[RMDB]
RNA sequence: GGGAACGACUCGAGUAGAGUCGAAAACAAUAGUUGCCAACGACAACUAUGCUCCGGUUGCUCAGGCAGCGUAACGCUGCUUGAAAGACCACAUGAAAGUCCUGGCGGGUUAAGCGCCGCCAGGCGGCAGGAGUAUCUAGUUCGCUAGAUACUCCUGAAAAGAAACAACAACAACAAC
Reactivity to 2A3 in 0.01 (KOAc 150mM, MgCl2 10mM, bicine 150mM(pH8.5), 24C), signal-to-noise 3, nucleotides 027 to 126: c030a020a040u010a000g010u000u010g020c040c060a130a070c090g090a100c010a010a000c020u010a020u120g010c030u090c100c080g010g000u000u030g000c010u000c000a010g020g000c000a010g000c010g010u060a060a020c190g020c000u010g000c000u000u000g000a010a000a000g020a000c060c030a010c020a060u300g090a150a020a010g270u000c000c000u000g000g000c000g000g020g000u050u060a090a040g040c030g020c010c000g010c010c000a000g010g000c010g000g020
Reactivity to DMS in 0.01 (KOAc 150mM, MgCl2 10mM, bicine 150mM(pH8.5), 24C), signal-to-noise 5, nucleotides 027 to 126: c100a160a040u000a000g010u000u010g010c000c020a110a120c300g000a270c000a000a010c000u000a000u000g010c050u000c130c170g020g010u000u010g000c300u000c000a020g010g010c000a000g020c000g010u010a090a090c160g000c000u000g000c010u000u000g000a010a060a300g000a010c000c010a130c200a110u010g010a050a010a020g030u010c000c000u000g000g010c000g000g000g000u000u000a110a070g010c240g000c000c010g010c000c000a020g000g000c010g000g000